The record gives the reactivity of an RNA of 177 nucleotides to 2A3 and DMS. The reactions ran in a buffer of 150 mM KOAc, 10 mM MgCl2 and 150 mM bicine (pH 8.5), at 24 C. For 2A3, 9,044 sequencing reads were counted.

RNA sequence: GGGAACGACUCGAGUAGAGUCGAAAAGAUAUGGAGCAUACCUCUUUUGACGGUCAGUGGUCGGAAACGACCAUGGGACCGAUAAGAGGUGCUCCUAAGUCAAAGCAUGGAUGUUCGCAUCCAUGCAGAAUUAGGCUAGGUUCGCCUAGCCUAAUUCAAAAGAAACAACAACAACAAC
Reactivity to 2A3 in 0.01 (KOAc 150mM, MgCl2 10mM, bicine 150mM(pH8.5), 24C), signal-to-noise 4, nucleotides 027 to 126: g020a000u060a020u120g000g010a000g000c030a060u140a300c020c010u010c070u080u100u180u280g300a280c120g000g010u010c010a020g020u000g030g010u010c010g010g060a010a050a040c010g000a000c030c010a010u010g020g160g000a000c000c000g030a020u040a000a000g000a010g000g010u000g010c000u010c000c000u000a050a010g010u020c050a160a080a000g000c010a010u000g000g010a020u010g020u130u190c300g010c130a000u000c000c000a000u000g000c000a000
Reactivity to DMS in 0.01 (KOAc 150mM, MgCl2 10mM, bicine 150mM(pH8.5), 24C), signal-to-noise 4, nucleotides 027 to 126: g010a030u000a300u000g020g000a020g010c010a080u010a100c030c010u000c000u000u000u010u000g010a270c140g020g000u000c000a300g020u000g010g000u010c000g010g000a070a050a190c000g030a010c000c000a000u000g000g050g010a030c010c000g010a060u010a000a010g010a010g010g010u000g000c000u000c000c000u000a000a070g010u000c020a160a130a150g010c000a000u000g010g000a010u000g010u000u030c260g040c010a010u000c000c000a000u000g020c000a010